[RMDB]
An RNA of 177 nucleotides, treated with DMS and 2A3 and read out base by base. The data come from the RNA Mapping Database (RMDB), library TTRDEL.

RNA sequence: GGGAACGACUCGAGUAGAGUCGAAAAGAUAUGGAGAGUGUGGCACUGGAGAAUACCUCGGAAACGAGAUUCUAUGAAGGUGCGUAACAUCACUCUCCUAAGUCAAACCUUUCGUUCGCGAAAGGAACGAUUUACGAGUGUUCGCACUCGUAAAUCGAAAAGAAACAACAACAACAAC
Reactivity to DMS in 0.01 (KOAc 150mM, MgCl2 10mM, bicine 150mM(pH8.5), 24C), signal-to-noise 2, nucleotides 027 to 126: g000a010u010a300u040g000g000a010g000a020g020u010g000u000g030g010c010a020c010u000g030g010a020g010a010a030u010a080c300c010u000c010g010g000a110a090a200c010g030a030g030a010u000u010c000u010a180u010g010a140a180g000g000u010g010c000g020u030a030a100c110a070u030c010a020c000u000c020u020c000c000u020a000a070g010u010c020a070a110a150c000c020u000u000u000c000g000u000u010c180g050c020g010a010a030a000g020g000a050a120
Reactivity to 2A3 in 0.01 (KOAc 150mM, MgCl2 10mM, bicine 150mM(pH8.5), 24C), signal-to-noise 2, nucleotides 027 to 126: g010a010u050a060u140g000g010a010g000a000g010u020g000u020g020g010c000a000c020u000g020g000a020g020a010a020u200a300c030c000u000c000g000g000a070a030a010c010g010a000g020a010u030u030c060u080a300u100g040a020a010g020g000u000g000c000g010u080a010a040c060a110u190c000a010c020u000c000u010c000c000u000a040a010g020u000c030a050a050a230c010c000u000u000u000c040g040u000u080c300g020c020g100a000a000a020g020g000a020a000